[RMDB]
RNA sequence: GGGAACGACUCGAGUAGAGUCGAAAACAUGUGAUCCCAACCGAAAACGGCACGCCUGUGUUUGAUUGGAUCCUACUGGGUGUCGGUGCGGAUGGUCAUACCGCAUCCCUGUUCCCAGGGCAAACCAGUCCUAAAUACCGUUCGCGGUAUUUAGGACAAAAGAAACAACAACAACAAC
Reactivity to 2A3 in 0.01 (KOAc 150mM, MgCl2 10mM, bicine 150mM(pH8.5), 24C), signal-to-noise 2, nucleotides 027 to 126: c030a040u080g080u080g050a020u020c000c010c000a010a030c020c000g030a010a010a000a160c020g020g020c050a020c060g280c030c050u070g010u030g020u080u080u110g120a130u090u140g040g050a010u060c010c030u070a100c040u020g080g010g000u030g040u040c030g000g000u020g010c020g010g010a020u030g060g040u110c020a050u060a130c030c030g010c000a030u070c000c010c010u030g010u050u000c010c000c010a010g030g000g020c050a080a030a070c000c010a010
Reactivity to DMS in 0.01 (KOAc 150mM, MgCl2 10mM, bicine 150mM(pH8.5), 24C), signal-to-noise 3, nucleotides 027 to 126: c130a040u010g000u010g010a080u000c060c020c040a080a130c070c020g000a030a050a110a050c040g000g010c040a050c130g020c080c030u010g030u000g000u020u000u010g000a080u000u000g000g000a180u010c030c040u010a090c070u000g000g010g000u000g000u000c060g010g010u000g010c010g000g010a110u020g000g000u010c160a080u010a110c050c010g000c010a050u010c000c020c050u000g020u000u000c010c010c000a300g020g010g010c210a040a080a080c100c070a130